[RMDB]
RNA sequence: GGGAACGACUCGAGUAGAGUCGAAAAAUCUUCGAAAUUGACGGGUUCUGCCAGUAUUCCAACACUAAUGGCGUUUUGGCGAACAUACUUGUGAUCAGUAUGUGGAAUAGCGACGCCUACAGGCUCAAAUUAGCUGGUAUUUCGAUACCAGCUAAUUAAAAGAAACAACAACAACAAC
Reactivity to 2A3 in 0.01 (KOAc 150mM, MgCl2 10mM, bicine 150mM(pH8.5), 24C), signal-to-noise 7, nucleotides 027 to 126: a000u090c070u160u080c030g040a070a120a140u160u210g070a080c020g000g000g050u110u070c020u050g030c010c010a030g050u020a070u070u080c010c020a100a040c050a050c140u150a140a180u120g000g010c020g000u010u040u090u140g120g020c000g010a020a010c000a010u010a000c010u090u120g090u150g140a090u230c020a020g000u010a010u020g030u040g050g090a140a020u090a090g000c000g010a010c010g010c000c010u040a000c010a060g020g040c020u030c080a060
Reactivity to DMS in 0.01 (KOAc 150mM, MgCl2 10mM, bicine 150mM(pH8.5), 24C), signal-to-noise 6, nucleotides 027 to 126: a070u010c020u000u010c040g010a050a090a070u020u020g000a100c070g000g000g000u000u010c050u020g000c030c020a070g010u000a080u000u020c030c050a080a110c140a100c110u020a070a070u030g000g010c010g000u000u000u030u030g010g030c020g010a080a010c010a010u000a010c010u010u030g020u020g010a090u020c150a010g010u000a000u000g000u000g000g010a090a130u020a110g000c070g010a030c050g000c000c010u020a090c150a070g000g000c040u010c070a070

Description:
An RNA of 177 nucleotides, treated with 2A3 and DMS and read out base by base. For 2A3, 6,502 sequencing reads were counted. In probing experiments dimethyl sulfate is read out at A N1 and C N3, which are open when not base-paired. It was measured as part of the RMDB library OK1LIB.